[RMDB]
RNA sequence: GGGAACGACUCGAGUAGAGUCGAAAAUGCGUCUGUCGCGACAGAAUCGAGCAGAAAGCAAGUCUCGGUGACUGUGACCGAGGAAGCUGUGCGGCAGCUGAAGGAUGUGAAUCUCCUUCUCAAGCGACUGGCCAAAAUGAUUCGUCAUUUUGGCCAGAAAAGAAACAACAACAACAAC
Reactivity to 2A3 in 0.01 (KOAc 150mM, MgCl2 10mM, bicine 150mM(pH8.5), 24C), signal-to-noise 4, nucleotides 027 to 126: u190g010c050g040u080c040u000g050u050c000g000c030g080a000c000a020g080a060a160u170c050g050a040g020c020a040g230a150a160a020g040c040a030a110g080u000c000u000c000g100g020u060g070a240c170u160g120u170g180a020c010c010g020a000g040g000a060a010g050c000u000g000u000g000c000g010g000c010a020g000c040u060g000a000a000g020g020a060u070g140u140g240a070a100u070c040u010c040c000u030u000c020u030c040a080a030g020c020g030a030
Reactivity to DMS in 0.01 (KOAc 150mM, MgCl2 10mM, bicine 150mM(pH8.5), 24C), signal-to-noise 3, nucleotides 027 to 126: u010g000c050g040u060c000u000g020u000c010g000c030g010a080c030a000g000a230a090u000c090g000a290g020c040a150g010a040a100a070g030c020a100a180g010u030c000u000c020g000g010u000g010a190c160u040g020u000g000a060c040c000g010a000g020g000a100a090g030c010u020g000u000g000c000g000g000c010a010g030c300u010g000a020a020g000g000a030u020g010u000g070a160a210u060c090u010c020c020u000u000c000u000c270a080a170g000c010g000a180